Conditions: 150 mM KOAc, 10 mM MgCl2 and 150 mM bicine (pH 8.5), 24 C.
An RNA of 170 nucleotides, treated with DMS and 2A3 and read out base by base.
2A3 adducts were read by reverse transcription with SuperScript II with manganese.
RNA sequence: GGGAACGACUCGAGUAGAGUCGAAAAGAAAGCAACGGGGCUAGCGAGUGGAUGUUCCACCCCCCAGCGGUGCCGAGUGAGGCCUAUCCCGGGGAUCGGUGAAUCGUCCCGGAAUGGGGACUCCGAGAUACUCCUGGGUUCGCCCAGGAGAAAAGAAACAACAACAACAAC
Reactivity to DMS in 0.01 (KOAc 150mM, MgCl2 10mM, bicine 150mM(pH8.5), 24C), signal-to-noise 5, nucleotides 027 to 129: g040a070a070a100g000c080a030a080c120g000g000g000g000c080u050a080g000c120g010a010g030u020g040g000a130u000g030u020u030c010c010a090c020c020c010c020c000c040a110g020c150g000g000u000g000c030c000g010a130g030u000g000a100g000g000c040c030u040a000u000c000c000c000g010g000g000g010a070u030c020g020g040u090g030a120a110u010c010g010u040c000c000c000g010g010a040a020u000g000g000g000g000a000c010u030c000c000g000a040g020a060u070a080
Reactivity to 2A3 in 0.01 (KOAc 150mM, MgCl2 10mM, bicine 150mM(pH8.5), 24C), signal-to-noise 7, nucleotides 027 to 129: g040a000a050a000g010c020a010a110c050g000g000g040g010c030u070a010g030c020g050a040g030u020g060g050a130u130g070u210u060c010c010a050c030c010c000c000c000c010a020g010c060g040g010u060g050c010c010g030a020g030u210g030a030g030g040c000c000u020a020u050c000c000c000g000g000g000g020a110u120c040g010g060u120g090a140a100u140c040g050u040c010c000c000g000g090a040a050u060g000g010g000g080a100c000u000c010c010g000a030g000a040u100a070